[RMDB]
RNA sequence: GGGAACGACUCGAGUAGAGUCGAAAAGAUAUGGAAUCUUGGACUGCUGCGAAGUAACUCGGAAACGAGUUAUGGAGCAGCCAAGGAUUCCUAAGUCAAAAGCAUCGUUAGUUCGCUAACGAUGCAACUAGAAUCAAAUGUUCGCAUUUGAUUCUAGAAAAGAAACAACAACAACAAC
Reactivity to 2A3 in 0.01 (KOAc 150mM, MgCl2 10mM, bicine 150mM(pH8.5), 24C), signal-to-noise 4, nucleotides 027 to 126: g000a000u030a020u100g000g010a020a020u020c020u040u080g060g080a300c060u080g110c150u300g300c050g010a020a010g010u010a000a000c000u000c000g020g010a030a030a020c000g000a000g010u000u010a000u020g000g000a000g010c000a000g000c000c000a010a010g130g020a030u030u000c000c000u000a030a010g020u000c020a020a040a070a180g000c000a000u000c000g000u000u010a000g010u040u090c300g000c230u000a000a000c000g000a000u000g020c000a000a000
Reactivity to DMS in 0.01 (KOAc 150mM, MgCl2 10mM, bicine 150mM(pH8.5), 24C), signal-to-noise 7, nucleotides 027 to 126: g010a030u000a280u020g010g000a030a030u010c000u000u000g000g030a170c230u010g010c000u010g020c180g010a280a290g000u000a010a000c000u000c000g010g000a060a080a110c000g000a010g000u000u000a000u000g000g010a250g010c000a010g020c000c020a040a030g010g010a070u010u000c000c000u000a020a100g000u000c030a080a080a140a160g020c000a000u000c000g010u000u000a000g000u000u020c300g030c010u000a000a010c000g000a000u000g010c010a020a030